RNA sequence: GGGAACGACUCGAGUAGAGUCGAAAAGUCGAACACCAGCCUGCUGCUGCGCUGGCAGCCCCCACUCAGCCACAACGGCGUGCUCACCGGCUACGUGCUCUCCUACCACCCCCGUGCGUGCGCCGCCAACUCCGUUAGAAUUCGUUCUAACGGAGUUAAAAGAAACAACAACAACAAC
Reactivity to DMS in 0.01 (KOAc 150mM, MgCl2 10mM, bicine 150mM(pH8.5), 24C), signal-to-noise 7, nucleotides 027 to 126: g000u010c060g020a080a110c080a100c060c030a110g010c040c050u010g000c030u000g010c030u000g010c160g020c090u000g000g000c040a050g000c020c050c020c020c020a090c120u010c050a070g000c040c050a090c120a100a110c050g000g000c010g020u000g010c040u000c020a050c060c140g010g000c080u000a070c130g000u000g000c040u000c030u000c030c030u010a110c160c030a180c030c060c040c010c040g010u000g000c090g020u000g010c040g010c010c020g010c090c120
Reactivity to 2A3 in 0.01 (KOAc 150mM, MgCl2 10mM, bicine 150mM(pH8.5), 24C), signal-to-noise 2, nucleotides 027 to 126: g080u060c030g040a110a000c060a050c050c020a000g040c010c010u040g010c020u030g010c010u030g020c080g020c070u040g070g000c010a030g010c000c030c000c010c000a020c020u080c020a020g010c010c020a080c030a140a050c040g020g000c000g010u030g010c000u010c010a040c020c040g050g000c020u060a030c020g020u010g010c000u010c000u030c040c010u030a060c030c000a050c000c000c000c010c000g000u010g000c000g010u020g000c000g000c000c000g000c010c000
This 177-nucleotide RNA was probed chemically with DMS and 2A3. Reactivities are given for positions 27 through 126. The DMS profile rests on 10,218 reads. For 2A3 the reverse transcriptase was SuperScript II with manganese.